[RMDB]
About this RNA:
This 177-nucleotide RNA was probed chemically with DMS and 2A3. The data come from the RNA Mapping Database (RMDB), library OK2TST. DMS adducts were read by reverse transcription with MarathonRT.

RNA sequence: GGGAACGACUCGAGUAGAGUCGAAAACAGUGGGGUCCCAUGAGGUGGACUCCUAGGGACGGCUUUAGGAGUGUCUUGAGUACCAGCAGGAGGUGGUAGUACUCUUCAGCCUCUACUGGGUGGGCCCGUGUACAUGUAAGUUCGCUUACAUGUACACAAAAGAAACAACAACAACAAC
Reactivity to DMS in 0.01 (KOAc 150mM, MgCl2 10mM, bicine 150mM(pH8.5), 24C), signal-to-noise 7, nucleotides 027 to 126: c070a100g020u010g020g000g010g020u000c000c000c030a180u000g000a090g020g020u010g000g010a040c010u000c000c000u000a030g010g000g020a190c260g010g010c030u000u000u010a030g010g010a080g010u000g010u000c050u000u000g010a090g020u000a080c010c030a060g010c070a100g010g010a060g000g010u000g000g010u000a050g010u000a060c140u000c040u000u000c110a250g000c010c010u000c010u000a060c080u000g010g000g010u000g010g000g010c020c020c020
Reactivity to 2A3 in 0.01 (KOAc 150mM, MgCl2 10mM, bicine 150mM(pH8.5), 24C), signal-to-noise 8, nucleotides 027 to 126: c040a030g080u090g040g020g000g010u040c030c010c020a060u160g070a040g060g090u210g010g040a010c000u010c010c010u020a010g010g000g050a070c090g140g160c030u070u050u060a040g030g020a030g010u050g030u050c020u050u060g030a020g030u040a050c020c010a020g030c070a090g030g100a050g020g070u080g040g030u060a040g030u050a080c030u040c000u110u050c020a020g020c000c000u010c000u010a050c040u040g040g000g010u090g030g030g010c000c010c010
The DMS profile rests on 14,853 reads.